[RMDB]
RNA sequence: GGGAACGACUCGAGUAGAGUCGAAAAGGGGUGGUGGGAUUUGAACUCUACUGUCAUGUUAACUCAUGAUUCUUGUCAUGCAAUAAACAAGAAGUAUCCUCUCAAGUUAAAGACAUGGCAUGGGAAAGAAGCAGUAACGAUUCGUCGUUACUGCUUCAAAAGAAACAACAACAACAAC
Reactivity to DMS in 0.01 (KOAc 150mM, MgCl2 10mM, bicine 150mM(pH8.5), 24C), signal-to-noise 1, nucleotides 027 to 126: g000g020g000g020u000g000g040u060g000g000g000a280u000u000u000g020a030a050c080u000c030u050a130c060u000g000u000c000a000u000g020u010u000a030a060c030u000c100a110u000g050a000u000u000c030u000u020g000u000c080a020u000g020c300a110a050u010a110a120a000c010a030a080g000a040a020g030u000a120u000c100c110u000c110u000c030a020a040g000u000u010a050a110a230g000a300c020a000u000g000g000c000a050u010g010g010g000a110a030a080
Reactivity to 2A3 in 0.01 (KOAc 150mM, MgCl2 10mM, bicine 150mM(pH8.5), 24C), signal-to-noise 2, nucleotides 027 to 126: g040g010g000g080u050g030g140u120g000g070g000a070u110u100u230g040a040a030c030u000c040u090a110c040u040g000u010c000a010u010g020u030u040a050a050c030u030c050a040u070g000a070u090u000c080u040u020g020u020c000a030u100g090c070a120a180u090a260a090a040c000a000a020g010a000a000g050u170a090u100c050c000u040c030u020c060a010a040g000u040u060a170a080a060g080a010c030a000u010g000g000c010a010u050g000g030g010a060a060a150